[RMDB]
RNA sequence: GGGAACGACUCGAGUAGAGUCGAAAAAUUAACUGGCGCGGCGGAGAAACACAGGCCUUACUUCUGUUGGAUGAGCGUCUUAAAGUGGAGCAGCAUGCGUUUGAGCGUGGAUUUUAUCUGCCCAACCUCUGACCACUAUGUUCGCAUAGUGGUCAGAAAAAGAAACAACAACAACAAC
Reactivity to DMS in 0.01 (KOAc 150mM, MgCl2 10mM, bicine 150mM(pH8.5), 24C), signal-to-noise 1, nucleotides 027 to 126: a120u000u010a090a100c060u030g010g010c060g010c070g060g030c030g020g000a070g000a120a070a060c160a070c120a060g060g000c040c020u000u000a040c050u000u010c070u000g030u010u000g000g010a090u000g000a110g020c040g010u000c130u010u010a060a070a050g030u000g010g000a140g000c040a040g020c100a050u000g030c160g010u000u010u010g010a070g020c060g020u050g030g000a070u000u000u030u000a050u020c040u000g020c030c000c020a090a060c090c090
An RNA of 177 nucleotides, treated with DMS and read out base by base. The RNA was probed in 150 mM KOAc, 10 mM MgCl2 and 150 mM bicine (pH 8.5) at 24 C. Source: RMDB library OK2TRN, as collected in RNAgym. DMS adducts were read by reverse transcription with MarathonRT.